Source: RMDB library VIROID, as collected in RNAgym. An RNA of 177 nucleotides, treated with DMS and 2A3 and read out base by base. High 2A3 reactivity points to a flexible backbone, as in loops and unpaired stretches. The reactions ran in a buffer of 150 mM KOAc, 10 mM MgCl2 and 150 mM bicine (pH 8.5), at 24 C.

[RMDB]
RNA sequence: GGGAACGACUCGAGUAGAGUCGAAAAUGGCCCAACCACCAAGUUUGGAAAGCACUCCGGGCCAAAUGGUUGAGUAGCAUCCAGAGGGAGGAAAUCCACACGGAGUUGACAGAGAAAUCACCUCCAGGUAGUGUACUAUCUUCGGAUAGUACACUACAAAAGAAACAACAACAACAAC
Reactivity to DMS in 0.01 (KOAc 150mM, MgCl2 10mM, bicine 150mM(pH8.5), 24C), signal-to-noise 2, nucleotides 027 to 126: u000g000g000c000c000c040a070a100c040c030a080c060c090a080a090g010u000u000u000g020g000a050a090a140g000c150a080c090u000c000c170g000g000g020c010c000a030a070a030u010g020g000u000u000g000a040g030u010a070g000c020a130u000c030c000a050g010a150g000g000g010a050g000g000a040a040a110u000c050c030a070c170a120c160g030g000a100g010u000u000g030a020c080a090g010a140g000a040a100a100u000c040a050c050c000u000c020c020a140g000
Reactivity to 2A3 in 0.01 (KOAc 150mM, MgCl2 10mM, bicine 150mM(pH8.5), 24C), signal-to-noise 2, nucleotides 027 to 126: u050g120g000c000c000c000a020a050c020c020a010c010c030a090a050g030u000u100u060g080g010a130a120a010g080c030a020c090u000c030c030g000g000g030c040c000a070a100a040u110g030g000u050u030g020a050g050u130a040g030c020a020u000c030c000a030g060a100g080g010g040a040g010g040a040a070a040u000c030c000a040c030a020c140g020g010a010g020u010u020g040a020c030a030g230a000g050a160a100a000u030c010a010c000c000u000c000c020a010g090